Chemical mapping of a 177-nucleotide RNA with 2A3 and DMS.
For 2A3, 3,816 sequencing reads were counted.
[RMDB]
RNA sequence: GGGAACGACUCGAGUAGAGUCGAAAAGAUACAUCAGAAGUCGGCACAACUCCCGACUCGCGGUGAGCGAUGCAGCGUAGCGCGAGCUACGCAGCUGCUGUGCGGAGGGCUAGCAAAAGCUAGCCUACGCAUGGUAGCGGUUCGCCGCUACCAUGCGAAAAGAAACAACAACAACAAC
Reactivity to 2A3 in 0.01 (KOAc 150mM, MgCl2 10mM, bicine 150mM(pH8.5), 24C), signal-to-noise 4, nucleotides 027 to 126: g000a000u130a030c040a050u070c040a010g080a130a000g070u010c010g000g080c180a040c050a280a300c090u050c010c000c000g000a010c010u000c020g010c030g000g050u070g010a010g000c010g090a080u120g020c050a010g000c000g000u000a000g000c010g010c050g070a020g000c000u000a000c000g000c000a010g000c000u010g000c000u010g000u040g020c020g020g040a140g050g000g000c000u000a000g000c000a090a220a180a020g010c000u000a000g000c000c000u000a010
Reactivity to DMS in 0.01 (KOAc 150mM, MgCl2 10mM, bicine 150mM(pH8.5), 24C), signal-to-noise 5, nucleotides 027 to 126: g000a140u010a090c110a060u030c050a140g020a130a030g010u000c000g000g060c270a120c120a100a100c300u060c070c000c000g000a050c030u000c050g000c300g020g000u000g000a100g010c030g020a060u020g000c090a050g020c010g030u000a010g000c010g000c300g000a140g010c000u010a010c000g030c010a010g020c000u000g000c000u000g000u000g000c060g000g020a110g000g000g000c000u000a010g000c010a090a120a070a130g010c000u000a010g000c010c000u000a000
For 2A3 the reverse transcriptase was SuperScript II with manganese. The RNA was probed in 150 mM KOAc, 10 mM MgCl2 and 150 mM bicine (pH 8.5) at 24 C. For DMS, 7,561 sequencing reads were counted.